An RNA of 207 nucleotides, treated with DMS and 2A3 and read out base by base. For 2A3, 1,879 sequencing reads were counted. It was measured as part of the RMDB library RNAMAK. For DMS, 2,129 sequencing reads were counted. Values cover nucleotides 27 to 156. For 2A3 the reverse transcriptase was SuperScript II with manganese.

[RMDB]
RNA sequence: GGGAACGACUCGAGUAGAGUCGAAAAUCUGUCUUCGGACAGACGCAGAACCUUUGUGUGGUAUCGUCCGGGAGCUGUACUAACCCAUUGGGUUAGAAUACAGCGAGGAUCGGACGGGAGUACCACACUCUGGUGAUAAGAGCGCUUCGGCGCUCAAUCGUUACGAGUACUUCGGUACUCGUAACGAAAAAGAAACAACAACAACAAC
Reactivity to DMS in 0.01 (KOAc 150mM, MgCl2 10mM, bicine 150mM(pH8.5), 24C), signal-to-noise 1, nucleotides 027 to 156: u000c000u000g020u000c000u000u000c300g060g000a030c000a020g010a010c080g010c040a180g020a240a030c010c010u000u000u010g030u000g090u000g010g010u000a040u000c000g000u010c010c010g000g010g000a210g010c000u000g030u010a110c010u010a000a010c000c020c000a300u000u010g030g040g040u000u000a010g000a090a090u000a020c010a090g040c000g020a100g020g000a040u000c000g010g000a020c010g000g040g060a300g070u000a010c000c000a000c020a010c010u000c010u000g010g040u010g010a170u000a030a110g000a030g020c000g030c000u020u000c200g020g000c010g000c000u000c040a000a020
Reactivity to 2A3 in 0.01 (KOAc 150mM, MgCl2 10mM, bicine 150mM(pH8.5), 24C), signal-to-noise 3, nucleotides 027 to 156: u020c000u000g000u000c000u030u030c240g140g000a000c000a000g010a030c040g020c090a070g040a150a030c000c000u000u000u000g010u010g030u010g000g030u080a200u300c010g000u000c010c000g000g000g000a020g000c000u000g000u000a000c000u000a010a010c000c030c130a300u190u300g000g000g000u000u010a010g000a040a040u060a020c010a000g000c000g000a040g000g000a010u010c020g000g000a000c000g000g010g000a070g010u010a000c000c000a000c020a000c000u000c000u000g000g000u000g020a000u080a220a090g000a000g010c020g030c030u080u140c280g090g000c000g000c010u000c030a010a060